An RNA of 177 nucleotides, treated with DMS and read out base by base.
Reactivities are rounded to 0.1 and cut off at 0 and 3.
For DMS the reverse transcriptase was MarathonRT.
RNA sequence: GGGAACGACUCGAGUAGAGUCGAAAAGAUAUGGAGCCGAUGAAAGGGAGCGUUUUUUGGUCGGAAACGACCAAAAACGCAUCGAUCUGGAGGCUCCUAAGUCAAAAGUCAUUGUUCGCAAUGACAACAUGCACCUACACUUCGGUGUAGGUGCAUGAAAAGAAACAACAACAACAAC
Reactivity to DMS in 0.01 (KOAc 150mM, MgCl2 10mM, bicine 150mM(pH8.5), 24C), signal-to-noise 1, nucleotides 027 to 126: g020a110u000a300u010g010g030a040g010c010c000g000a290u020g000a130a050a130g000g020g000a030g110c000g010u000u010u000u000u010u010g010g000u010c000g000g000a090a080a220c000g000a010c000c000a000a000a030a030a000c000g010c000a070u000c100g000a190u010c000u010g000g040a160g010g010c000u000c000c000u020a010a050g000u010c040a100a100a070a070g000u000c000a010u000u000g020u000u040c210g020c020a010a000u010g000a020c000a050a230